The record gives the reactivity of an RNA of 207 nucleotides to 2A3.
The 2A3 profile rests on 559 reads.
The data come from the RNA Mapping Database (RMDB), library M2RFPK.
Conditions: 150 mM KOAc, 10 mM MgCl2 and 150 mM bicine (pH 8.5), 24 C.

RNA sequence: GGGAACGACUCGAGUAGAGUCGAAAAACGAGUCGUACGCGACUUGAAUGGUAUUGUCGGCGUAAAAGAACAAGACGUCACCGGACGCGACCGGGCUAAAAAGCGAAACGUCAUCUACGGAUGACGAAAAACGGACCUGGGUUCGCCCAGGUCCGAACGAAACUGGUAGGUUCGCCUACCAGUUUCGAAAAGAAACAACAACAACAAC
Reactivity to 2A3 in 0.01 (KOAc 150mM, MgCl2 10mM, bicine 150mM(pH8.5), 24C), signal-to-noise 1, nucleotides 027 to 156: a000c020g000a010g000u000c010g030u060a010c290g000c020g020a010c000u010u010g050a060a060u190g090g060u230a170u160u210g090u110c070g000g000c010g010u020a050a000a280a060g050a100a000c140a130a060g130a020c010g010u000c010a020c040c000g000g000a030c000g000c000g000a010c010c000g010g000g020c050u030a020a010a000a020a000g010c010g000a060a060a000c000g010u000c000a000u000c000u040a010c180g140g000a000u000g000a000c000g020a130a030a010a050a000c040g010g100a000c000c000u000g000g040g000u020u030c210g040c060c000c000a000g000g010u020c000c000g000a000a000